[RMDB]
RNA sequence: GGGAACGACUCGAGUAGAGUCGAAAACUACCUUUACUGUGGUCUGGCCCCAAGCACUGUUUUGGUGAUGAGGGCAAGUACCUAUAGGGCAGUGUUUUGCACCUCUGAGAGUGGAGUGGCUCCCUUUUAGACCAUAAUUGUUCGCAAUUAUGGUCUAAAAAGAAACAACAACAACAAC
Reactivity to 2A3 in 0.01 (KOAc 150mM, MgCl2 10mM, bicine 150mM(pH8.5), 24C), signal-to-noise 9, nucleotides 027 to 126: c020u060a060c000c010u070u110u120a130c110u130g050u080g120g020u010c010u020g070g010c000c010c010c000a120a160g060c010a000c020u090g100u300u300u230u300g010g000u010g000a020u020g020a230g010g000g000c000a010a010g030u060a030c000c000u030a040u070a060g030g010g020c060a070g060u020g090u130u050u030u080g040c060a130c050c010u010c030u060g130a170g010a050g180u190g050g010a020g010u070g020g000c010u000c000c000c000u000u010u000
Reactivity to DMS in 0.01 (KOAc 150mM, MgCl2 10mM, bicine 150mM(pH8.5), 24C), signal-to-noise 3, nucleotides 027 to 126: c050u020a080c040c010u010u010u010a100c160u010g020u020g000g010u000c000u000g020g020c010c010c000c030a070a300g000c020a010c000u000g000u030u020u060u040g010g010u010g000a040u000g000a200g000g010g040c000a020a020g020u030a020c020c010u010a110u010a010g000g010g010c120a070g030u010g000u000u000u000u000g010c100a070c040c010u000c010u000g000a130g020a160g020u020g010g010a030g000u010g000g020c020u000c010c000c010u000u000u010